[RMDB]
RNA sequence: GGGAACGACUCGAGUAGAGUCGAAAAGAACUGUGGCCGGCUCGGAAUAGAAUCAGGGGGUGCAAACUGCCCACUGGCAGAAAGGAUUAUAGCAAAUGCGUACCCUAUUGCAAUACAGCCCGGCCAACAUAGACUACUCUAUUCGUAGAGUAGUCAACUCGCAGAUUAUGUUCGCAUAAUCUGCGAGAAAAGAAACAACAACAACAAC
Reactivity to 2A3 in 0.01 (KOAc 150mM, MgCl2 10mM, bicine 150mM(pH8.5), 24C), signal-to-noise 1, nucleotides 027 to 156: g040a090a010c010u030g000u000g120g010c000c000g000g000c080u050c010g090g060a030a020u210a170g080a040a020u200c050a130g000g070g000g000g000u120g010c000a100a050a110c000u000g000c000c000c080a140c200u030g000g020c010a000g040a050a090a000g150g000a140u180u070a070u220a160g000c010a000a020a120u050g020c080g020u100a090c000c000c020u020a090u000u130g000c050a020a030u010a080c030a000g050c080c000c030g000g000c000c000a000a000c000a010u070a000g030a000c000u000a000c000u000c000u000a090u030u000c160g080u010a000g000a000g000u000a000g040u000c000a000a000
The record gives the reactivity of an RNA of 207 nucleotides to 2A3. The reactions ran in a buffer of 150 mM KOAc, 10 mM MgCl2 and 150 mM bicine (pH 8.5), at 24 C. Reactivities are given for positions 27 through 156. Source: RMDB library M2RFPK, as collected in RNAgym.